Chemical mapping of a 207-nucleotide RNA with 2A3 and DMS.
High 2A3 reactivity points to a flexible backbone, as in loops and unpaired stretches.
The 2A3 profile rests on 5,674 reads.
The reactions ran in a buffer of 150 mM KOAc, 10 mM MgCl2 and 150 mM bicine (pH 8.5), at 24 C.

[RMDB]
RNA sequence: GGGAACGACUCGAGUAGAGUCGAAAAUUGCGCCCUUCGACGUUAUCCUGUGCGAUGAGCUUAGUACGUUUGGCUUCCCAGUCCCGCCAGUACGCUACCUGAGCAGCAAAGGGCGACUUGGGAGCCUUAGCCUUGAAGUGUGCCAUCGGCAAUCCUCAAAGUGAAGUAGAUUCGUCUACUUCACUUUAAAAGAAACAACAACAACAAC
Reactivity to 2A3 in 0.01 (KOAc 150mM, MgCl2 10mM, bicine 150mM(pH8.5), 24C), signal-to-noise 6, nucleotides 027 to 156: u110u060g020c020g010c020c010c000u010u040c060g060a060c040g040u070u070a060u120c030c040u090g030u080g060c020g060a100u070g030a080g010c030u050u050a050g040u100a060c050g050u040u070u070g000g000c000u020u010c010c010c000a010g020u010c040c060c030g040c010c020a030g050u090a040c100g030c030u040a090c010c070u110g120a050g000c050a010g020c060a110a070a060g070g020g000c020g000a000c000u010u010g010g010g000a000g010c010c020u010u040a020g010c000c000u020u080g050a060a030g030u030g050u060g070c030c010a060u060c030g030g010c020a020a050u070c010c030u100c100
Reactivity to DMS in 0.01 (KOAc 150mM, MgCl2 10mM, bicine 150mM(pH8.5), 24C), signal-to-noise 2, nucleotides 027 to 156: u010u000g010c020g010c000c000c060u010u000c000g030a060c040g000u010u000a080u000c030c020u010g050u000g000c010g000a090u010g000a150g010c030u000u000a110g020u000a040c040g010u000u000u000g030g010c020u000u000c000c040c020a140g000u000c010c060c030g070c020c020a130g030u000a090c110g020c020u000a040c050c070u000g000a140g000c040a090g020c020a070a130a170g000g020g030c030g010a050c020u000u000g020g020g010a060g000c010c020u000u000a030g010c000c020u000u000g010a070a080g020u010g010u000g010c020c020a060u000c040g000g010c050a120a120u000c020c020u000c150

Source: RMDB library OK3TST, as collected in RNAgym.